[RMDB]
RNA sequence: GGGAACGACUCGAGUAGAGUCGAAAAUGGCAUUCUGUCGACACAUGGAAGAUUGAUUUUAGGUAAGAUGUAUCUCCAGCUAUUGAACGCGGGAAAGCCUUUCUCUUUCCUGCCCCAAAAACUGAUAGUUUCUAUAAACGUUCGCGUUUAUAGAAACAAAAGAAACAACAACAACAAC
Reactivity to 2A3 in 0.01 (KOAc 150mM, MgCl2 10mM, bicine 150mM(pH8.5), 24C), signal-to-noise 2, nucleotides 027 to 126: u030g030g020c020a040u060u030c030u070g060u070c030g050a010c000a010c020a130u040g010g090a100a060g040a100u020u090g050a040u020u080u150u190a060g090g030u040a070a030g020a070u070g030u080a040u020c030u000c010c010a030g010c000u040a050u130u100g060a100a000c050g000c020g010g000g000a010a010a000g010c010c000u060u150u030c070u040c000u000u010u000c010c000u020g000c000c000c000c010a020a180a030a020a030c030u080g040a060u050a170
Reactivity to DMS in 0.01 (KOAc 150mM, MgCl2 10mM, bicine 150mM(pH8.5), 24C), signal-to-noise 2, nucleotides 027 to 126: u020g000g000c040a050u000u000c040u000g020u010c060g020a220c100a060c150a060u000g020g010a070a060g020a060u010u000g010a090u000u000u000u020a100g020g010u010a060a090g020a090u000g020u000a050u000c030u000c010c000a050g000c090u010a110u000u010g020a090a110c280g020c000g000g010g010a010a040a040g010c200c060u010u000u000c140u000c010u000u000u000c000c000u000g010c000c020c040c020a030a030a020a040a100c150u020g000a090u010a190

The data come from the RNA Mapping Database (RMDB), library RFMREP.
Chemical mapping of a 177-nucleotide RNA with 2A3 and DMS.
Values cover nucleotides 27 to 126.